The record gives the reactivity of an RNA of 177 nucleotides to DMS and 2A3. For DMS, 6,660 sequencing reads were counted. Reactivities are rounded to 0.1 and cut off at 0 and 3. High DMS reactivity at an A or C suggests that its Watson-Crick edge is free. DMS adducts were read by reverse transcription with MarathonRT. It was measured as part of the RMDB library RFMREP. The RNA was probed in 150 mM KOAc, 10 mM MgCl2 and 150 mM bicine (pH 8.5) at 24 C.
[RMDB]
RNA sequence: GGGAACGACUCGAGUAGAGUCGAAAAUGAUGGAUUGAGAGAUGAAGGGCGAGAGGUUUGUCCUGGUCCACGCAAGGCAGAUAGGGGAGAUAGUGCUUCUCUUAUGAGAAGGGCGUCGUGAACACAGCCUCUGUAAAUUGUUCGCAAUUUACAGAGGAAAAGAAACAACAACAACAAC
Reactivity to DMS in 0.01 (KOAc 150mM, MgCl2 10mM, bicine 150mM(pH8.5), 24C), signal-to-noise 5, nucleotides 027 to 126: u010g000a090u000g000g010a080u000u000g010a090g000a090g010a050u000g000a090a070g010g010g020c060g010a060g020a100g010g010u000u000u010g010u000c020c020u000g010g020u000c030c050a060c110g000c090a060a070g000g010c060a060g010a100u000a060g020g000g010g000a070g010a090u010a060g020u010g010c020u000u000c000u000c010u000u010a100u020g010a040g010a020a040g010g000g010c060g020u010c030g000u000g010a120a060c110a070c190a120g000
Reactivity to 2A3 in 0.01 (KOAc 150mM, MgCl2 10mM, bicine 150mM(pH8.5), 24C), signal-to-noise 4, nucleotides 027 to 126: u140g030a030u050g020g030a010u030u080g050a050g000a000g010a070u080g090a040a070g020g020g020c030g010a050g020a030g100g080u060u110u130g030u070c010c000u010g000g020u030c020c000a020c000g050c020a040a030g040g000c010a010g020a070u110a050g050g020g000g020a050g010a000u070a040g060u050g110c040u030u020c010u000c000u110u240a200u300g020a010g010a010a020g000g010g000c010g000u050c020g030u040g070a070a000c060a000c010a050g020